[RMDB]
RNA sequence: GGGAACGACUCGAGUAGAGUCGAAAACUGCAAACGACGAACGUUUCGCACUCGCCGCUUAAAUCCGGUGAGCCUUGCAACAGCACGCUGAUGGGCUGGGCAAGGGGGUAGCAAUACCUCCCGGCUGCAAGGGAAUUUACAUCAGCUGGCUGCGUGCGUUUAAACGUAGCUUCGGCUACGUUUAAACAAAAGAAACAACAACAACAAC
Reactivity to DMS in 0.01 (KOAc 150mM, MgCl2 10mM, bicine 150mM(pH8.5), 24C), signal-to-noise 2, nucleotides 027 to 156: c070u000g020c030a100a100a070c040g020a170c090g020a170a120c050g010u000u000u000c080g000c050a090c020u000c000g020c020c010g000c050u020u000a160a140a130u010c120c000g040g100u000g000a020g020c010c020u020u000g020c010a060a050c020a030g000c000a070c090g030c050u000g020a070u000g000g020g030c020u000g020g000g050c050a050a030g030g010g020g010g030u000a040g020c250a170a230u000a020c000c000u000c000c000c000g010g090c020u000g030c070a170a100g010g010g010a050a080u000u010u010a140c020a000u000c040a010g030c000u000g040g020c010u000g000c000g020u000g010c050
Reactivity to 2A3 in 0.01 (KOAc 150mM, MgCl2 10mM, bicine 150mM(pH8.5), 24C), signal-to-noise 4, nucleotides 027 to 156: c030u030g010c030a000a030a000c010g180a030c070g090a210a080c030g010u010u010u040c100g000c000a010c000u000c000g000c000c000g000c060u090u220a060a030a080u110c040c000g000g000u010g000a010g020c000c000u030u090g000c010a040a030c000a010g000c000a000c070g010c000u000g000a010u020g000g060g000c030u050g030g030g000c040a070a070g050g000g000g000g000u000a010g030c030a060a080u020a040c000c000u030c000c000c000g040g000c010u120g060c090a100a110g040g020g040a040a040u120u140u120a060c000a000u000c000a010g000c010u030g040g000c020u020g040c080g110u050g010c010
An RNA of 207 nucleotides, treated with DMS and 2A3 and read out base by base. It was measured as part of the RMDB library ARCHII. For DMS, 2,796 sequencing reads were counted. DMS adducts were read by reverse transcription with MarathonRT. 2A3 adducts were read by reverse transcription with SuperScript II with manganese.